Conditions: 150 mM KOAc, 10 mM MgCl2 and 150 mM bicine (pH 8.5), 24 C. Chemical mapping of a 177-nucleotide RNA with 2A3 and DMS. The 2A3 profile rests on 1,559 reads. Values cover nucleotides 27 to 126. For 2A3 the reverse transcriptase was SuperScript II with manganese.
[RMDB]
RNA sequence: GGGAACGACUCGAGUAGAGUCGAAAAUGUGUCUCCGCUUGGCUGGCAACCCAAGAGUGCCCAUCUGAGGAAUUGUGCCAAACACUUGCUUGAAUCUUCAAUCUGGAUUAAGUUGGUCUCGGGAGGCGUCGAAAAGGCAAUUCGUUGCCUUUUCGACAAAAGAAACAACAACAACAAC
Reactivity to 2A3 in 0.01 (KOAc 150mM, MgCl2 10mM, bicine 150mM(pH8.5), 24C), signal-to-noise 2, nucleotides 027 to 126: u120g050u000g020u050c010u010c000c010g010c090u060u050g010g000c000u030g080g000c030a050a080c010c020c000a040a010g050a020g040u090g040c000c030c010a100u020c030u050g070a110g000g060a130a100u110u080g020u120g010c000c000a000a060a000c090a010c020u060u090g010c010u000u050g110a040a080u020c010u090u070c130a120a250u110c140u110g000g000a010u010u050a050a020g000u010u020g050g000u000c000u010c050g010g030g030a040g040g000c030
Reactivity to DMS in 0.01 (KOAc 150mM, MgCl2 10mM, bicine 150mM(pH8.5), 24C), signal-to-noise 3, nucleotides 027 to 126: u010g020u010g010u000c010u000c030c040g040c050u000u000g010g020c020u000g000g010c040a070a070c180c010c020a090a020g020a080g020u010g000c010c040c030a140u000c040u000g000a160g010g000a080a110u000u000g010u000g000c000c040a070a080a130c080a030c040u000u010g010c030u010u020g020a060a050u010c020u000u010c190a060a060u000c140u010g010g010a040u000u000a020a060g000u000u000g020g020u000c040u010c080g020g010g020a090g020g000c080